An RNA of 177 nucleotides, treated with 2A3 and DMS and read out base by base. Conditions: 150 mM KOAc, 10 mM MgCl2 and 150 mM bicine (pH 8.5), 24 C. Values are in units of 0.01, from 0 to 300, in steps of 10. The DMS profile rests on 2,899 reads.
RNA sequence: GGGAACGACUCGAGUAGAGUCGAAAAGAUAUGGAGUCCAAGGGAGCUCGUGGUCGGAAACGACCACCAGAGCGAAGAACUUGAGACUCCUAAGUCAAAACGUGAGCCAUGUUCGCAUGGCUCACGAGAUUUACCUGAUGUUCGCAUCAGGUAAAUCAAAAGAAACAACAACAACAAC
Reactivity to 2A3 in 0.01 (KOAc 150mM, MgCl2 10mM, bicine 150mM(pH8.5), 24C), signal-to-noise 2, nucleotides 027 to 126: g000a010u010a000u060g000g000a000g000u000c000c000a000a010g020g040g010a020g000c010u010c010g010u000g000g000u000c000g000g020a010a000a000c000g000a000c020c000a010c010c050a080g010a000g040c010g020a060a030g000a000a010c000u040u020g060a180g010a300c000u000c000c000u000a000a010g000u000c000a000a080a040a100c020g000u010g000a000g020c000c010a010u010g060u060u150c300g020c260a000u010g020g000c000u010c000a010c000g010a020
Reactivity to DMS in 0.01 (KOAc 150mM, MgCl2 10mM, bicine 150mM(pH8.5), 24C), signal-to-noise 3, nucleotides 027 to 126: g000a010u010a010u000g010g000a040g010u000c000c000a000a020g010g000g010a010g040c000u000c040g020u010g010g010u010c000g010g010a000a000a010c010g020a010c000c020a000c210c300a050g000a010g020c020g020a100a120g010a170a210c000u010u000g020a120g010a000c000u000c000c000u000a010a050g000u000c010a090a060a120a200c010g000u000g000a020g010c010c000a010u000g000u000u020c190g050c000a000u000g000g000c000u000c000a000c000g010a000